[RMDB]
Chemical mapping of a 177-nucleotide RNA with 2A3 and DMS. Reactivities are given for positions 27 through 126. Conditions: 150 mM KOAc, 10 mM MgCl2 and 150 mM bicine (pH 8.5), 24 C.
RNA sequence: GGGAACGACUCGAGUAGAGUCGAAAAGAUAUGGACGUGAUAGUAAGACAGCUCUGUGUCGGAAACGACAUUGAGCAAUGACGCUAUACGUCCUAAGUCAAAAUCCCAUUACUUCGGUAAUGGGAAAGCUACAUCAGAACUUCGGUUCUGAUGUAGCAAAAGAAACAACAACAACAAC
Reactivity to 2A3 in 0.01 (KOAc 150mM, MgCl2 10mM, bicine 150mM(pH8.5), 24C), signal-to-noise 2, nucleotides 027 to 126: g000a000u020a020u060g000g000a000c020g010u130g300a070u010a010g040u050a280a200g240a300c110a070g000c000u000c000u040g030u000g000u000c020g000g000a010a010a000c000g010a000c010a000u010u040g030a000g020c000a010a120u110g010a000c040g000c000u000a010u010a010c000g000u000c000c000u010a020a000g010u000c040a000a000a000a300u070c000c000c000a000u010u000a010c010u010u160c290g180g000u000a000a010u000g010g000g000a070a030a010
Reactivity to DMS in 0.01 (KOAc 150mM, MgCl2 10mM, bicine 150mM(pH8.5), 24C), signal-to-noise 1, nucleotides 027 to 126: g000a000u010a100u000g010g000a010c010g000u010g000a040u000a040g020u000a080a160g050a240c250a160g040c000u000c000u000g010u000g020u000c000g050g010a040a010a060c080g020a000c010a000u000u000g000a080g040c000a140a040u000g000a160c300g040c030u010a000u000a000c000g010u000c000c010u000a000a040g000u000c010a090a100a160a250u000c010c010c010a000u000u000a000c000u000u010c300g040g030u000a000a000u000g000g000g010a000a000a040
For 2A3 the reverse transcriptase was SuperScript II with manganese. It was measured as part of the RMDB library TTRDES.